The record gives the reactivity of an RNA of 177 nucleotides to DMS and 2A3. Conditions: 150 mM KOAc, 10 mM MgCl2 and 150 mM bicine (pH 8.5), 24 C. 2A3 adducts were read by reverse transcription with SuperScript II with manganese. It was measured as part of the RMDB library OK1LIB. DMS adducts were read by reverse transcription with MarathonRT. In probing experiments dimethyl sulfate is read out at A N1 and C N3, which are open when not base-paired.

RNA sequence: GGGAACGACUCGAGUAGAGUCGAAAAGAAGCGUAAUCGCAAGUGUAGCGUUAGGGAUUGUGGUGAAAUAAAACCUGACAGAGCGAUCGGCAAUCAAGAAGCUACCGGCGGAAAACGCCUAUAGAAAGGGAUUUAUAUUCUUCGGAAUAUAAAUCCCAAAAGAAACAACAACAACAAC
Reactivity to DMS in 0.01 (KOAc 150mM, MgCl2 10mM, bicine 150mM(pH8.5), 24C), signal-to-noise 4, nucleotides 027 to 126: g000a190a240g010c020g000u000a010a180u020c000g000c010a010a150g010u050g010u010a000g010c000g030u020u010a080g030g000g000a030u010u000g000u010g000g010u010g000a090a090a200u040a070a040a090a070c020c020u000g010a110c100a100g010a110g000c230g010a100u000c010g020g000c020a030a020u010c010a030a060g000a080a240g010c000u000a000c010c060g010g010c000g020g000a010a040a060a010c000g000c000c030u040a120u020a050g000a080a080a130
Reactivity to 2A3 in 0.01 (KOAc 150mM, MgCl2 10mM, bicine 150mM(pH8.5), 24C), signal-to-noise 3, nucleotides 027 to 126: g050a000a020g020c000g010u010a050a040u060c010g000c050a110a130g010u090g000u180a000g010c030g000u010u100a050g000g100g000a000u010u010g040u030g070g000u040g130a070a090a030u230a080a080a030a030c000c000u010g060a050c040a030g130a020g070c060g140a120u000c010g060g010c000a000a000u000c010a030a030g030a030a020g070c000u000a020c000c000g000g000c000g000g010a000a030a000a000c000g000c020c020u090a110u060a040g150a070a060a020